[RMDB]
RNA sequence: GGGAACGACUCGAGUAGAGUCGAAAAAGUGCCUAUGCCUAAAGAUCAAUUUGUGACAGCACUUCGUGACGCAGAUGCUUGUUUUAUUACAUUAAGUGAACAGAUCGAUGCAGAAAUUUUAGCACAAGCAGACUUGCUUAUUCGUAAGCAAGUCUGCAAAAGAAACAACAACAACAAC
Reactivity to 2A3 in 0.01 (KOAc 150mM, MgCl2 10mM, bicine 150mM(pH8.5), 24C), signal-to-noise 2, nucleotides 027 to 126: a000g090u050g000c000c000u000a000u160g000c000c010u090a080a080a000g000a070u130c070a020a170u130u030u030g050u000g030a020c030a010g100c000a010c000u000u110c070g020u050g020a130c080g010c030a060g040a300u030g000c040u090u120g050u100u050u090u070a070u100u080a000c080a040u060u220a140a030g060u140g030a030a010c010a040g070a010u010c000g020a020u040g000c030a010g290a000a050a010u140u250u210u070a120g000c010a030c000a030a020
Reactivity to DMS in 0.01 (KOAc 150mM, MgCl2 10mM, bicine 150mM(pH8.5), 24C), signal-to-noise 1, nucleotides 027 to 126: a070g000u020g000c050c050u010a130u020g000c080c000u000a120a120a050g000a050u020c020a050a070u000u030u020g030u020g000a050c020a030g070c080a000c000u000u000c110g050u000g010a160c080g000c120a070g000a050u000g000c040u000u000g020u000u020u000u040a090u000u000a130c130a200u010u010a060a040g070u000g000a090a100c000a140g000a040u000c010g020a000u000g000c080a150g000a020a040a030u000u010u060u000a070g000c020a070c120a040a240